[RMDB]
RNA sequence: GGGAACGACUCGAGUAGAGUCGAAAAAAGAACAGCGUGAGGCCGAGGGUGGUUCGAAGGUACCUGAAGACACGCUGAACAAGGUUGAUGCCGCGGUGGCGGAAGCGAAGGCGGCACUUGGCGGAUCGAACCCGAAUACGUUCGCGUAUUCGGGUUCAAAAGAAACAACAACAACAAC
Reactivity to 2A3 in 0.01 (KOAc 150mM, MgCl2 10mM, bicine 150mM(pH8.5), 24C), signal-to-noise 1, nucleotides 027 to 126: a000a000g030a090a010c000a000g000c010g050u000g000a030g130g170c000c000g000a030g000g010g120u100g060g080u170u140c030g010a000a090g150g090u100a000c000c000u010g000a000a000g070a000c000a000c010g030c000u000g040a000a000c040a010a010g070g030u130u120g030a060u250g000c000c000g000c000g110g000u000g130g050c090g110g030a080a000g000c130g100a110a050g120g020c080g000g150c040a000c100u110u300g080g000c040g150g000a070u030c190
Reactivity to DMS in 0.01 (KOAc 150mM, MgCl2 10mM, bicine 150mM(pH8.5), 24C), signal-to-noise 1, nucleotides 027 to 126: a120a140g000a210a120c000a030g000c040g000u000g040a130g000g000c030c100g000a300g000g000g030u000g000g010u000u040c160g050a100a100g000g020u000a030c020c000u000g020a290a060g040a000c110a000c010g000c010u000g000a070a220c110a200a090g010g000u000u010g020a180u010g000c000c000g000c000g000g000u000g040g000c000g000g070a060a060g000c100g000a010a160g040g060c030g000g000c000a060c020u020u000g010g020c000g010g020a220u040c060